[RMDB]
RNA sequence: GGGAACGACUCGAGUAGAGUCGAAAACGCUGGGCAACAGGACGUUGUCAGCGACCACUGAAGCGCGCACGGUGGGUCGCUUGGAUUUACUAACUGUUGCCUGUGCUGAAGCGCGCACGGCAACCGAAAGGUGCGACUGGUGUGAUUCGUCACACAACAGAGAUUACGUGUUCGCACGUAAUCUCUGAAAAGAAACAACAACAACAAC
Reactivity to 2A3 in 0.01 (KOAc 150mM, MgCl2 10mM, bicine 150mM(pH8.5), 24C), signal-to-noise 2, nucleotides 027 to 156: c090g000c010u040g020g000g000c000a000a010c000a010g040g040a030c140g220u300u300g060u150c010a000g000c010g000a000c000c020a010c030u020g030a280a040g010c000g000c000g000c030a020c010g020g000u080g030g230g150u030c000g010c030u080u180g090g000a100u140u260u300a220c110u100a130a030c000u000g000u000u000g000c040c000u010g000u010g000c000u120g020a090a010g000c020g000c010g000c020a000c000g070g020c060a190a160c070c000g000a150a020a010g000g020u020g000c040g040a090c140u260g110g000u000g000u010g000a060u050u100c220g040u060c080a010c000a000c010a130a000